[RMDB]
RNA sequence: GGGAACGACUCGAGUAGAGUCGAAAAAGUAGAUUCGUCUACUAUGGAGAUAUGGAGCUCAAACGACGCAUGGUCUGUGAUGUGGUCGGAAACGACCAUGCAUGGCCAUGAACUACGUCUAUGAGCUCCUAAGUCAGGAGAAGCUCUUCGGAGCUAAUAUGAGCUUACUGUUCGCAGUAAGCUCAUAAAAAGAAACAACAACAACAAC
Reactivity to DMS in 0.01 (KOAc 150mM, MgCl2 10mM, bicine 150mM(pH8.5), 24C), signal-to-noise 2, nucleotides 027 to 156: a070g010u000a030g000a090u000u020c300g020u010c020u000a010c000u000a170u000g010g000a230g010a120u010a240u000g000g000a040g030c020u000c010a010a040a220c300g000a040c030g000c030a040u000g030g030u000c020u000g050u000g000a090u010g020u010g000g000u000c010g030g000a090a130a190c020g000a010c000c000a010u010g010c000a040u000g000g010c000c000a040u000g000a020a200c040u000a140c000g030u000c020u000a300u030g000a010g010c000u000c000c000u010a000a070g000u000c040a110g010g000a150g000a150a140g000c000u000c000u000u010c230g090g010a040g020c000u000a010a100
Reactivity to 2A3 in 0.01 (KOAc 150mM, MgCl2 10mM, bicine 150mM(pH8.5), 24C), signal-to-noise 3, nucleotides 027 to 156: a030g010u020a000g000a050u040u110c230g060u040c110u000a000c000u010a140u180g140g010a160g000a020u060a010u060g000g000a000g000c000u000c000a000a000a040c160g000a000c000g000c020a000u000g000g000u060c200u200g080u100g090a300u060g050u000g010g000u000c010g000g000a030a070a010c010g000a010c000c000a000u020g000c000a010u010g120g000c040c010a000u000g010a000a000c040u130a030c030g000u000c000u000a000u000g000a000g000c000u000c000c000u000a000a000g000u010c020a010g070g120a140g020a110a030g020c000u000c000u040u140c300g090g000a000g010c000u010a000a000
Description
Chemical mapping of a 207-nucleotide RNA with DMS and 2A3. The DMS profile rests on 3,655 reads. For DMS the reverse transcriptase was MarathonRT. It was measured as part of the RMDB library RNAMAK. The 2A3 profile rests on 1,787 reads. 2A3 is a SHAPE reagent: it acylates the 2'-hydroxyl of flexible nucleotides of all four kinds.